[RMDB]
About this RNA:
The record gives the reactivity of an RNA of 177 nucleotides to DMS and 2A3. For 2A3, 3,119 sequencing reads were counted. DMS adducts were read by reverse transcription with MarathonRT. 2A3 adducts were read by reverse transcription with SuperScript II with manganese. Values cover nucleotides 27 to 126. The reactions ran in a buffer of 150 mM KOAc, 10 mM MgCl2 and 150 mM bicine (pH 8.5), at 24 C.
RNA sequence: GGGAACGACUCGAGUAGAGUCGAAAAAGGCCGACAAGAUCAACAUGGCUCACUCCUUGGAGCUUCGCGUCCCGUUCUUGGAUAAGGAAGUAUUUGAGGUUGCUGAAACCAUUCCUUAUGACCUCAACUCUAGGCAUCUAUUCGUAGAUGCCUAGAGAAAAGAAACAACAACAACAAC
Reactivity to DMS in 0.01 (KOAc 150mM, MgCl2 10mM, bicine 150mM(pH8.5), 24C), signal-to-noise 4, nucleotides 027 to 126: a100g010g000c040c000g010a120c110a060a080g000a090u000c070a090a120c130a080u010g000g000c040u000c080a090c080u000c060c150u000u000g020g000a040g020c070u010u010c070g000c150g020u000c010c010c060g000u000u010c020u000u020g020g010a050u000a020a030g000g000a030a040g010u000a100u010u000u020g010a110g020g000u000u000g010c180u000g000a140a020a040c020c010a170u000u000c020c010u000u000a040u000g000a090c020c020u000c140a050a140
Reactivity to 2A3 in 0.01 (KOAc 150mM, MgCl2 10mM, bicine 150mM(pH8.5), 24C), signal-to-noise 3, nucleotides 027 to 126: a020g060g000c010c040g050a090c080a080a020g020a160u110c030a020a090c010a110u130g030g000c010u000c010a050c020u010c020c000u030u060g160g000a040g000c000u090u070c020g020c060g070u030c020c000c020g050u070u020c000u050u110g060g000a030u020a020a030g030g020a030a020g030u080a230u110u100u170g070a040g030g000u030u030g040c170u160g050a030a010a020c010c010a010u010u020c010c000u030u040a010u110g140a100c010c040u060c050a030a090